An RNA of 207 nucleotides, treated with DMS and 2A3 and read out base by base. For 2A3 the reverse transcriptase was SuperScript II with manganese. The 2A3 profile rests on 1,901 reads. It was measured as part of the RMDB library OK3TST. The DMS profile rests on 2,321 reads. Values cover nucleotides 27 to 156.

RNA sequence: GGGAACGACUCGAGUAGAGUCGAAAACAACAUCUUGCGCCAGGCCGUCAACGGUUAGCGAGUCGCUUAACAGGAUCACGUAAUCACUUGACGGAACAACAGCGCCGUUUGUGGUAAUUGCUUUAAUCUCUGUAUCGCUAACAACCUUAUUCACUACUAGGUUUAACAGGUUCGCCUGUUAAACCUAAAAAGAAACAACAACAACAAC
Reactivity to DMS in 0.01 (KOAc 150mM, MgCl2 10mM, bicine 150mM(pH8.5), 24C), signal-to-noise 1, nucleotides 027 to 156: c020a130a130c050a070u010c040u030u000g040c020g050c030c010a100g070g010c010c000g020u000c020a040a090c110g000g040u000u010a040g000c000g030a120g000u000c040g050c110u000u000a170a140c130a090g020g020a030u000c010a100c180g040u000a020a040u000c000a070c030u020u000g020a010c020g020g020a130a090c050a090a130c080a150g020c040g000c000c020g020u000u000u010g020u020g040g030u000a060a070u020u000g010c050u000u000u000a060a120u000c010u000c030u010g020u000a060u000c000g000c020u010a050a080c030a050a010c010c030u010u000a050u000u000c020a030c050u000a140c100
Reactivity to 2A3 in 0.01 (KOAc 150mM, MgCl2 10mM, bicine 150mM(pH8.5), 24C), signal-to-noise 3, nucleotides 027 to 156: c060a010a010c020a070u040c030u090u070g010c000g010c020c050a120g030g000c030c010g000u030c010a030a000c020g030g030u000u010a010g030c010g010a010g060u070c050g040c290u170u160a070a040c030a070g040g010a020u080c050a020c160g010u020a020a000u030c020a020c050u040u090g020a000c000g010g050a030a020c040a020a030c020a060g070c020g010c060c000g030u070u080u110g010u040g020g010u030a130a120u060u040g020c030u080u050u240a090a090u060c080u000c020u050g060u090a070u030c020g010c060u020a030a020c040a010a030c010c000u080u130a080u190u210c100a060c100u130a010c010